[RMDB]
RNA sequence: GGGAACGACUCGAGUAGAGUCGAAAACAAACAAAGGCUCGACCCCGUGAACGUCGCGAUGGUCGUCGAUGAAGCGCUUCACCUCGUGAAGGGGCGGUCGAGCUCCGCCUGGGCAAAAGACGCCGACGCCUUGCGCAGGAUCUCGUUGGCCACGCGCAGCUCGCGCACCUGGCGCUCAAGCAAUCUGAUGCGCUCCUUCGGCCGUCGUCACGCCCUCGCGCUUGCCGGCAUCACGCUCGUACUGCCGGAUCCAGCCGCAAAAAGAAAGCUCUGGUUUCGACCAGAGCAAAAGAAACAACAACAACAAC
Reactivity to 2A3 in 0.01 (KOAc 150mM, MgCl2 10mM, bicine 150mM(pH8.5), 24C), signal-to-noise 7, nucleotides 027 to 266: c040a010a140a020c040a070a230a030g030g000c010u010c020g010a020c000c000c010c020g060u090g090a190a050c040g020u030c020g010c010g020a050u180g060g040u070c070g020u030c010g050a090u230g150a150a040g070c040g000c050u040u040c020a050c020c070u090c050g020u030g070a060a040g040g020g030g010c080g010g020u070c010g000a000g000c000u030c010c000g030c010c010u020g000g000g000c010a040a050a050a080g010a010c050g020c020c000g020a040c050g030c030c100u120u130g020c020g000c020a010g010g020a050u060c040u020c100g090u090u100g100g020c000c000a010c010g010c000g000c010a110g100c080u190c120g000c000g010c010a040c010c050u050g050g010c060g040c070u060c070a040a040g020c020a030a070u040c020u090g090a130u080g040c000g000c000u040c010c000u030u040c000g020g060c110c020g020u010c000g030u020c000a000c080g010c010c010c000u010c040g000c000g000c000u010u040g020c000c000g000g010c000a020u100c030a050c090g110c050u120c090g040u070a060c060u030g010c010c000g000g000a020u040c010c000a020g050c010c060g060c030a070a060a120a030a010g300a040a120a140
Reactivity to DMS in 0.01 (KOAc 150mM, MgCl2 10mM, bicine 150mM(pH8.5), 24C), signal-to-noise 3, nucleotides 027 to 266: c070a150a120a140c080a090a150a150g000g000c000u000c040g010a050c040c020c100c020g020u010g010a110a130c080g000u000c120g020c120g020a120u010g010g020u010c060g000u000c030g030a080u010g020a200a180g000c080g000c120u000u000c030a040c010c070u010c090g010u000g020a090a050g010g000g010g020c090g010g000u000c000g000a030g000c010u000c150c110g010c010c060u000g000g010g010c000a060a090a180a230g000a050c040g000c040c020g020a100c160g000c140c110u000u000g010c020g030c060a090g010g010a050u000c060u000c150g020u000u000g000g000c000c020a050c240g000c000g010c090a140g010c160u000c090g000c000g000c010a080c110c150u010g010g000c040g020c100u000c060a070a060g010c130a080a070u000c080u000g010a070u000g010c000g010c020u010c070c020u000u000c000g000g000c010c040g010u010c020g000u010c280a090c100g000c000c020c010u000c130g010c010g010c070u000u000g020c000c000g000g000c010a030u010c090a050c060g010c160u010c150g000u000a130c200u000g000c020c010g000g000a060u010c040c080a060g030c040c020g020c090a050a080a090a090a120g010a190a190a150

Annotation: Source: RMDB library POS240, as collected in RNAgym. Chemical mapping of a 307-nucleotide RNA with 2A3 and DMS. For 2A3, 12,771 sequencing reads were counted. Values cover nucleotides 27 to 266. DMS adducts were read by reverse transcription with MarathonRT.